An RNA of 177 nucleotides, treated with 2A3 and DMS and read out base by base. The data come from the RNA Mapping Database (RMDB), library OK2TST. The DMS profile rests on 1,643 reads. For 2A3, 1,110 sequencing reads were counted. Conditions: 150 mM KOAc, 10 mM MgCl2 and 150 mM bicine (pH 8.5), 24 C.
[RMDB]
RNA sequence: GGGAACGACUCGAGUAGAGUCGAAAAGAAGCGGUUAUGGUGAGGUUCAAUGAUGAUCUUCGCCAGAUCAUCAGCUUUUCACGCAAGGCGACGGCGGCAGAUUAUGCCAUCUUCGCGCCGCUCGUCACAUGCACCGUGGUUUCGACCACGGUGCAUGAAAAGAAACAACAACAACAAC
Reactivity to 2A3 in 0.01 (KOAc 150mM, MgCl2 10mM, bicine 150mM(pH8.5), 24C), signal-to-noise 1, nucleotides 027 to 126: g040a000a020g020c050g000g060u070u090a100u240g040g010u010g010a030g040g000u110u020c010a090a090u150g020a040u020g000a000u020c000u080u060c080g020c090c020a020g010a000u020c000a000u040c000a000g000c000u080u130u010u000c020a030c110g120c060a000a090g050g000c000g000a000c010g040g000c020g000g010c020a010g030a200u140u050a120u300g040c040c030a010u010c000u000u030c010g060c000g000c050c000g000c020u000c000g010u000c000a030
Reactivity to DMS in 0.01 (KOAc 150mM, MgCl2 10mM, bicine 150mM(pH8.5), 24C), signal-to-noise 2, nucleotides 027 to 126: g000a070a040g040c030g000g000u010u000a060u000g020g000u000g000a030g040g010u000u010c290a130a090u000g000a050u010g010a020u000c000u000u010c300g020c230c270a040g000a020u000c030a040u000c020a050g000c060u000u010u000u000c010a030c040g030c120a050a070g020g010c000g000a010c050g000g010c060g000g010c060a050g000a190u010u000a080u000g010c090c040a040u000c010u000u000c000g010c010g000c010c000g000c060u010c060g000u000c090a120

Reactivities are given for positions 27 through 126. 2A3 adducts were read by reverse transcription with SuperScript II with manganese.